RNA sequence: GGGAACGACUCGAGUAGAGUCGAAAACAACCACAAGUUCGGUUGGUGCGUCUGUCCGGGUCGGGGCGCGUAAGCCGCCCAACCUCAUCCCGUUCCCUCGCGGAACAGGGAGUGUUAGCGCACGGCUAGUCAGAUGCUAUUUCGAUAGCAUCUGACUAAAAGAAACAACAACAACAAC
Reactivity to 2A3 in 0.01 (KOAc 150mM, MgCl2 10mM, bicine 150mM(pH8.5), 24C), signal-to-noise 4, nucleotides 027 to 126: c010a010a000c010c030a030c090a170a090g100u100u100c060g050g000u010u070g090g020u030g030c000g070u080c020u070g090u050c030c030g010g030g000u050c140g010g000g020g000c040g010c020g060u150a110a010g020c070c010g000c010c000c000a010a010c000c010u020c040a090u000c000c000c000g000u010u010c010c010c000u110c220g070c230g000g020a060a070c030a180g030g000g000a010g020u110g040u070u120a040g000c000g010c010a010c000g030g000c030u010
Reactivity to DMS in 0.01 (KOAc 150mM, MgCl2 10mM, bicine 150mM(pH8.5), 24C), signal-to-noise 3, nucleotides 027 to 126: c110a060a090c010c040a100c130a110a090g010u030u000c150g000g000u000u010g000g020u000g000c000g000u020c000u000g020u020c070c170g020g010g010u010c060g000g000g000g020c020g030c030g020u060a110a220g000c210c020g000c040c010c020a140a020c020c020u020c140a200u000c000c000c000g020u000u010c000c000c020u040c300g020c140g000g010a000a000c000a090g000g000g030a030g050u030g000u020u040a010g000c000g000c020a000c020g020g000c050u000
An RNA of 177 nucleotides, treated with 2A3 and DMS and read out base by base. The data come from the RNA Mapping Database (RMDB), libraries RFM100 and RFMREP. Conditions: 150 mM KOAc, 10 mM MgCl2 and 150 mM bicine (pH 8.5), 24 C. DMS adducts were read by reverse transcription with MarathonRT.